An RNA of 207 nucleotides, treated with DMS and 2A3 and read out base by base. The data come from the RNA Mapping Database (RMDB), library M2RFPK. Reactivities are rounded to 0.1 and cut off at 0 and 3. DMS adducts were read by reverse transcription with MarathonRT. Conditions: 150 mM KOAc, 10 mM MgCl2 and 150 mM bicine (pH 8.5), 24 C. Reactivities are given for positions 27 through 156.
RNA sequence: GGGAACGACUCGAGUAGAGUCGAAAAGUCCUGCCAUGAGACCGCAACGAGAGCAUGUCGCAUCGAAUGGACUUGGGGAGUCGGCAGCUUGCCCCACGGAUGAGCGCCUAAUGCCGGCAUUCGGGAAAAUAGACUGGAUAGUUCGCUAUCCAGUCAAGAUUUACAUGCACUUCGGUGCAUGUAAAUCAAAAGAAACAACAACAACAAC
Reactivity to DMS in 0.01 (KOAc 150mM, MgCl2 10mM, bicine 150mM(pH8.5), 24C), signal-to-noise 2, nucleotides 027 to 156: g020u000c010c000u000g000c170c000a040u000g030a120g030a020c020c210g000c020a180a300c060g030a190g000a250g020c030a090u000g010u010c010g000c030a090u000c030g010a140a300u010g000g000a050c000u000u000g010g000g020g000a160g070u000c000g010g030c040a110g050c090u000u000g020c000c000c000c030a090c040g000g020a090u000g000a090g080c070g020c040c030u000a090a080u000g000c020c020g000g020c000a220u000u000c000g030g000g000a100a070a150a220u010a120g000a010c020u000g000g000a080u000a000g030u000u000c300g040c000u000a010u000c000c000a000g010u000c000a010a050
Reactivity to 2A3 in 0.01 (KOAc 150mM, MgCl2 10mM, bicine 150mM(pH8.5), 24C), signal-to-noise 5, nucleotides 027 to 156: g010u000c000c000u000g030c030c010a010u020g010a010g020a050c040c060g040c070a090a130c150g080a050g010a010g170c060a160u140g010u050c030g010c020a020u030c100g040a030a030u050g000g020a010c000u020u030g000g000g000g000a040g010u010c010g000g010c000a010g020c030u090u130g010c020c010c030c050a060c060g070g000a150u100g020a040g000c030g030c000c050u110a150a040u110g030c030c010g010g000c030a040u080u120c040g000g030g060a020a070a020a130u120a080g000a000c010u000g010g000a000u000a000g020u040u060c130g010c130u000a000u000c000c000a000g000u000c000a000a000